An RNA of 177 nucleotides, treated with DMS and 2A3 and read out base by base. Values cover nucleotides 27 to 126. 2A3 adducts were read by reverse transcription with SuperScript II with manganese. The reactions ran in a buffer of 150 mM KOAc, 10 mM MgCl2 and 150 mM bicine (pH 8.5), at 24 C. As a SHAPE reagent, 2A3 marks flexible, mostly unpaired nucleotides at the ribose 2'-OH.
RNA sequence: GGGAACGACUCGAGUAGAGUCGAAAAGAUAUGGAACUUGUUGUCAGCUUUGACACAACUAUUACAGCCAUCGGAAACGAUGGCUGUAACGAAUUGUUCAAAGCUUGGAUUUACAAGUUCCUAAGUCCAUAUGAGUAUCCUUCGGGAUACUCAUAUGAAAAGAAACAACAACAACAAC
Reactivity to DMS in 0.01 (KOAc 150mM, MgCl2 10mM, bicine 150mM(pH8.5), 24C), signal-to-noise 4, nucleotides 027 to 126: g000a100u000a300u010g000g010a010a000c000u000u000g010u000u000g010u000c020a040g010c010u000u000u000g010a020c300a010c010a010a020c090u000a250u000u000a000c000a000g000c000c000a000u000c000g010g010a180a110a200c010g020a000u000g000g000c000u000g000u000a000a000c080g010a050a120u000u000g000u000u000c000a010a000a020g010c010u000u010g010g010a020u000u010u000a010c010a020a010g010u000u000c000c000u000a020a110g000u000c030
Reactivity to 2A3 in 0.01 (KOAc 150mM, MgCl2 10mM, bicine 150mM(pH8.5), 24C), signal-to-noise 2, nucleotides 027 to 126: g080a040u180a070u250g000g000a020a000c000u010u000g010u000u030g010u030c020a010g000c020u070u000u020g030a030c050a000c010a280a080c110u080a050u050u030a010c020a030g000c000c000a030u020c010g070g040a000a180a070c000g020a000u010g000g070c000u010g000u000a000a000c010g030a130a300u010u040g000u030u010c000a010a010a020g000c000u040u170g080g000a010u300u240u080a020c000a000a000g020u000u010c000c000u000a020a000g010u000c010